[RMDB]
RNA sequence: GGGAACGACUCGAGUAGAGUCGAAAACAAUAGUUCGCUAUUGAUGACCCGAUGACGAAGGUGGGCACUCUCCGACUUGAUGAGGAUGUGGGGCGAGGAGCCAGAGGAAAACGAACGUUCGCGUUCGGGUAGAGAUCUAUUUCGAUAGAUCUCUACCAAAAGAAACAACAACAACAAC
Reactivity to 2A3 in 0.01 (KOAc 150mM, MgCl2 10mM, bicine 150mM(pH8.5), 24C), signal-to-noise 5, nucleotides 027 to 126: c010a010a000u020a000g020u050u040c170g020c090u010a000u020u040g090a120u090g070a120c000c020c040g050a140u140g050a020c100g060a090a020g080g060u100g050g060g000c030a020c050u060c000u000c010c030g080a080c060u080u160g040a110u130g060a100g110g040a060u100g060u080g060g030g010g020c080g020a040g040g000a030g020c020c010a030g050a030g030g100a050a030a010a030c010g000a010a000c000g010u050u070c250g000c010g080u000u010c000g030
Reactivity to DMS in 0.01 (KOAc 150mM, MgCl2 10mM, bicine 150mM(pH8.5), 24C), signal-to-noise 5, nucleotides 027 to 126: c010a020a020u010a020g010u010u010c190g020c000u000a020u000u000g010a090u000g020a150c020c000c010g000a080u010g020a090c090g010a130a070g000g020u010g010g000g010c030a130c070u000c040u010c030c020g000a070c110u000u000g010a130u010g020a100g020g000a090u010g010u010g000g010g010g010c080g010a080g000g010a130g010c040c040a100g000a130g010g000a060a040a050a300c030g010a020a010c000g010u000u010c220g010c010g010u000u000c010g000

Structure probing data (2A3 and DMS) for a 177-nucleotide construct. Values cover nucleotides 27 to 126. Source: RMDB library RFMREP, as collected in RNAgym. The 2A3 profile rests on 6,079 reads.